[RMDB]
RNA sequence: GGGAACGACUCGAGUAGAGUCGAAAAUAGGAGGCUCAGGAGUUGAAGGCCAGCCUCUGCAACUUAGUGAGGACCUACGAAACUUAGUGGGACCCUGAUGCCAAAUAAAAAGGGCUGGGGAUGUAGCCCUUACGUGAGUAUUCGUACUCACGUAAGGAAAAGAAACAACAACAACAAC
Reactivity to DMS in 0.01 (KOAc 150mM, MgCl2 10mM, bicine 150mM(pH8.5), 24C), signal-to-noise 6, nucleotides 027 to 126: u000a120g000g010a190g010g000c010u000c120a090g000g010a050g010u000u020g010a090a150g000g000c020c020a050g000c020c010u000c010u000g010c110a070a060c060u000u010a080g020u010g010a180g020g000a110c020c010u000a050c020g000a120a120a120c170u000u000a090g010u010g000g020g010a160c010c010c010u000g010a080u010g000c010c030a040a090a120u010a050a070a110a150a090g010g000g010c010u000g010g010g010g000a080u010g010u000a110g010c160
Reactivity to 2A3 in 0.01 (KOAc 150mM, MgCl2 10mM, bicine 150mM(pH8.5), 24C), signal-to-noise 3, nucleotides 027 to 126: u130a020g030g010a020g010g000c020u030c100a040g050g000a050g030u120u140g140a110a020g080g000c000c000a000g010c000c000u040c010u020g000c000a060a080c030u060u070a040g040u140g160a060g000g050a070c020c020u020a030c040g070a140a150a030c070u130u110a050g010u010g000g020g020a020c000c020c000u050g010a110u170g010c000c020a060a140a060u180a040a130a020a020a010g030g010g000c030u050g030g000g000g010a020u100g070u160a030g020c000